[RMDB]
RNA sequence: GGGAACGACUCGAGUAGAGUCGAAAAAGGCCGGCGCGAUACUCCCUAUAACAUCCUUUUCAGUAGAUUUCAUUAUCGUGCCGGUUUUCUCACAUGCAAAGCAAUCCCGCCAAUCUAAUUGAUGGCGAUUUCCCACAUCAUUCGUGAUGUGGGAAAUAAAAGAAACAACAACAACAAC
Reactivity to DMS in 0.01 (KOAc 150mM, MgCl2 10mM, bicine 150mM(pH8.5), 24C), signal-to-noise 3, nucleotides 027 to 126: a140g010g000c010c010g010g020c000g000c000g000a010u010a030c210u010c030c020c010u020a100u050a070a100c120a060u010c060c030u000u000u000u020c090a120g000u020a080g010a130u020u010u030c180a060u020u000a000u000c010g010u000g010c000c000g000g030u000u000u000u000c000u010c020a130c190a060u020g000c110a050a050a130g000c090a090a080u010c040c060c000g040c010c010a020a070u000c020u010a120a080u020u010g020a060u000g010g000c010g000
Reactivity to 2A3 in 0.01 (KOAc 150mM, MgCl2 10mM, bicine 150mM(pH8.5), 24C), signal-to-noise 6, nucleotides 027 to 126: a000g030g000c000c000g010g000c000g000c000g020a000u020a040c040u100c040c030c010u090a090u060a150a050c060a100u140c030c020u060u070u140u210c070a040g040u110a000g060a100u060u120u080c060a040u050u110a020u020c010g010u000g000c000c000g000g000u000u000u000u000c000u020c000a030c000a040u140g040c060a060a050a080g010c010a010a090u100c050c030c010g000c020c000a110a160u010c030u180a110a280u140u220g010a030u010g020g000c010g010

The record gives the reactivity of an RNA of 177 nucleotides to DMS and 2A3.
For 2A3 the reverse transcriptase was SuperScript II with manganese.
The data come from the RNA Mapping Database (RMDB), libraries RFM100 and RFMREP.